The record gives the reactivity of an RNA of 177 nucleotides to 2A3 and DMS.
RNA sequence: GGGAACGACUCGAGUAGAGUCGAAAACAAGCUGAUCAGUGGCCAUCCGCUCCAGCAGCUGGAGCACCUAACUAGUUGCCACACCUACUACCAGAGAUUCGAUGCUGGUUGCCAGCUGCACAAGGAAGCGUAUUACCACUUUCGAGUGGUAAUACGCAAAAGAAACAACAACAACAAC
Reactivity to 2A3 in 0.01 (KOAc 150mM, MgCl2 10mM, bicine 150mM(pH8.5), 24C), signal-to-noise 2, nucleotides 027 to 126: c020a000a030g020c010u060g040a120u100c110a030g020u030g000g000c000c000a050u060c070c010g000c040u010c010c030a020g020c040a020g010c020u000g030g000a010g040c040a050c010c010u110a170a110c020u030a050g080u040u150g000c000c020a040c000a020c000c000u090a090c050u070a010c020c000a010g000a000g010a160u140u210c110g060a100u190g040c010u000g000g000u000u000g010c000c000a000g050c000u020g030c040a040c030a020a060g100g050a070a040
Reactivity to DMS in 0.01 (KOAc 150mM, MgCl2 10mM, bicine 150mM(pH8.5), 24C), signal-to-noise 2, nucleotides 027 to 126: c090a150a120g020c040u010g000a100u000c200a120g000u000g000g030c030c110a150u020c100c070g000c020u000c060c050a110g010c000a010g040c000u000g030g010a110g020c070a010c110c010u000a050a050c140u000a110g000u020u020g020c000c070a110c070a170c060c060u000a060c060u010a080c050c020a020g000a060g010a140u010u010c250g000a100u020g010c020u010g020g000u000u000g010c070c030a030g000c000u010g020c030a100c240a110a080g000g010a090a230
Conditions: 150 mM KOAc, 10 mM MgCl2 and 150 mM bicine (pH 8.5), 24 C. High DMS reactivity at an A or C suggests that its Watson-Crick edge is free.